This 177-nucleotide RNA was probed chemically with 2A3 and DMS. For DMS the reverse transcriptase was MarathonRT. For 2A3 the reverse transcriptase was SuperScript II with manganese.

RNA sequence: GGGAACGACUCGAGUAGAGUCGAAAAGAUAUGGAGGGAAUUCGAGGAUCGCACGGACUCGGAAACGAGUUUGCGGGAGAAUCUCCUAAGUCAAACGGAACAUCUUUCUUCGGAAAGAUGUUCCGAAGACCUGUUUUAUCUUCGGAUAAAACAGGUCAAAAGAAACAACAACAACAAC
Reactivity to 2A3 in 0.01 (KOAc 150mM, MgCl2 10mM, bicine 150mM(pH8.5), 24C), signal-to-noise 2, nucleotides 027 to 126: g020a030u090a070u260g000g040a030g080g080g190a150a190u020u040c030g050a250g070g050a040u030c020g000c040a010c220g160g020a010c010u000c010g040g000a020a070a040c010g010a020g000u000u070u090g020c000g010g020g000a030g030a010a000u000c030u000c020c000u040a160a050g040u030c070a170a010a010c010g000g000a000a000c010a000u000c000u010u000u010c000u030u080c260g050g000a010a000a000g000a010u000g000u000u010c000c000g000a010a000
Reactivity to DMS in 0.01 (KOAc 150mM, MgCl2 10mM, bicine 150mM(pH8.5), 24C), signal-to-noise 4, nucleotides 027 to 126: g020a050u000a240u030g000g000a060g010g010g000a070a120u000u000c010g010a100g020g000a050u000c020g010c010a050c300g000g020a010c010u000c000g010g000a100a090a170c020g010a020g000u000u010u000g040c010g000g000g000a030g000a030a020u000c050u010c000c000u010a050a120g000u000c030a050a130a300c010g000g000a020a020c000a010u000c000u000u010u000c000u010u000c230g010g010a020a020a000g010a000u000g010u000u000c000c020g020a060a040